[RMDB]
Description
Conditions: 150 mM KOAc, 10 mM MgCl2 and 150 mM bicine (pH 8.5), 24 C. The record gives the reactivity of an RNA of 177 nucleotides to DMS and 2A3.
RNA sequence: GGGAACGACUCGAGUAGAGUCGAAAAAUGGAACUAAUAUAUGGUUCAGUGGUUCAGAUGAGGCGAAUGAUCAAGGAGUGGUAGCAAGCUAUAAUCCAUCUACAGGAGCAUUCAAUUAUGCAUAUUACUUCCUUCCAAACUUCGGUUUGGAAGGAAGAAAAGAAACAACAACAACAAC
Reactivity to DMS in 0.01 (KOAc 150mM, MgCl2 10mM, bicine 150mM(pH8.5), 24C), signal-to-noise 2, nucleotides 027 to 126: a140u020g000g050a110a030c020u000a080a170u010a100u030a080u030g000g010u030u000c050a130g000u020g000g010u000u030c050a000g000a060u000g000a120g000g050c060g000a010a010u000g000a110u000c020a100a120g000g000a030g020u000g000g000u000a050g000c180a170a050g000c070u070a080u030a140a130u030c040c030a070u010c040u000a050c130a080g000g000a060g010c000a070u020u030c140a020a050u010u010a020u000g000c050a040u070a090u050u050a020
Reactivity to 2A3 in 0.01 (KOAc 150mM, MgCl2 10mM, bicine 150mM(pH8.5), 24C), signal-to-noise 2, nucleotides 027 to 126: a020u170g040g010a020a040c060u130a200a120u230a110u100a050u170g020g010u010u010c000a060g020u020g180g040u070u090c050a010g010a160u010g040a060g010g020c060g050a150a150u120g050a030u060c060a110a070g010g020a100g060u000g000g020u050a030g020c030a010a020g000c030u030a040u050a050a160u030c000c010a050u030c000u070a090c010a060g120g000a040g090c000a030u090u080c000a000a110u130u030a060u170g020c000a030u030a050u180u020a070